[RMDB]
RNA sequence: GGGAACGACUCGAGUAGAGUCGAAAAUUGCAUGCGAAAGGAUGGUAAGCCAAUGAAGUUGCUGAGUCUCACGAUUAGUGAUACUUAGUAACGAAUUGUGCGUGACACGUAUUGUCCUGGAUGGGAAAGCAUGCGGCUUAUAAUCUGAUGUUAGCAAUCUAACAGGAAGGUUCGCCUUCCUGUUAGAAAAAGAAACAACAACAACAAC
Reactivity to DMS in 0.01 (KOAc 150mM, MgCl2 10mM, bicine 150mM(pH8.5), 24C), signal-to-noise 3, nucleotides 027 to 156: u000u000g020c030a080u000g020c020g020a090a180a130g000g020a020u000g060g040u000a040a120g000c000c010a060a060u000g000a190a260g010u010u010g000c010u010g010a030g020u000c050u000c010a040c010g010a300u000u010a170g000u010g000a020u000a020c000u000u000a020g040u000a000a010c010g020a090a040u000u000g030u010g060c060g050u000g020a150c050a050c070g030u010a070u000u000g020u010c000c000u000g010g030a250u000g000g000g010a090a080a190g000c010a030u020g040c080g020g000c050u010u000a080u010a070a110u010c040u000g020a190u000g000u010u000a130g000c070a070a250
Reactivity to 2A3 in 0.01 (KOAc 150mM, MgCl2 10mM, bicine 150mM(pH8.5), 24C), signal-to-noise 4, nucleotides 027 to 156: u100u050g040c000a000u020g000c010g060a090a030a010g060g000a010u070g010g010u060a050a020g010c000c000a000a020u080g050a130a000g000u020u000g000c000u010g000a000g010u010c010u000c020a050c010g220a300u110u230a090g000u000g000a000u000a000c000u010u020a000g000u000a010a010c000g000a000a010u010u040g070u150g000c030g000u010g040a030c020a000c180g060u100a030u030u130g020u020c000c000u020g030g040a050u090g080g040g040a040a070a010g010c000a020u010g000c000g010g000c040u140u080a100u050a150a060u030c060u080g080a090u120g110u060u050a020g070c020a040a050
An RNA of 207 nucleotides, treated with DMS and 2A3 and read out base by base. The RNA was probed in 150 mM KOAc, 10 mM MgCl2 and 150 mM bicine (pH 8.5) at 24 C. For 2A3, 2,279 sequencing reads were counted. In probing experiments dimethyl sulfate is read out at A N1 and C N3, which are open when not base-paired.